[RMDB]
RNA sequence: GGGAACGACUCGAGUAGAGUCGAAAAGAUAUGGAGCUAUUAGGUGCUUCCGUGAUGACCAGUCGAGUAUUCGGAAACGAAUACUCGACUGCAAGCGGAAGAACUACACCGAAGUAGCUCCUAAGUCGAUAAUUACGGUCUUCGGACCGUAAUUAUCAAAAGAAACAACAACAACAAC
Reactivity to DMS in 0.01 (KOAc 150mM, MgCl2 10mM, bicine 150mM(pH8.5), 24C), signal-to-noise 2, nucleotides 027 to 126: g000a040u010a280u000g010g010a000g010c000u000a020u000u000a300g020g020u000g000c020u000u000c010c010g030u000g010a110u010g010a110c300c020a000g000u000c000g020a040g000u000a010u010u000c000g010g020a030a090a110c000g020a010a000u000a000c000u000c000g000a000c010u000g030c100a020a140g010c010g000g000a020a010g000a060a050c120u020a300c010a010c000c000g000a190a240g010u000a000g010c000u000c000c030u010a010a050g020u030c030
Reactivity to 2A3 in 0.01 (KOAc 150mM, MgCl2 10mM, bicine 150mM(pH8.5), 24C), signal-to-noise 2, nucleotides 027 to 126: g050a000u030a070u090g010g000a000g020c000u000a030u300u010a300g030g000u030g010c010u010u030c000c010g020u110g090a300u300g150a160c190c030a010g010u030c000g000a000g000u000a020u000u000c020g010g020a000a020a050c000g000a000a000u020a000c000u020c010g000a000c000u000g000c000a050a120g030c010g020g010a010a020g000a020a020c030u200a040c050a010c000c000g010a070a010g000u020a010g000c000u050c000c000u010a000a010g020u000c030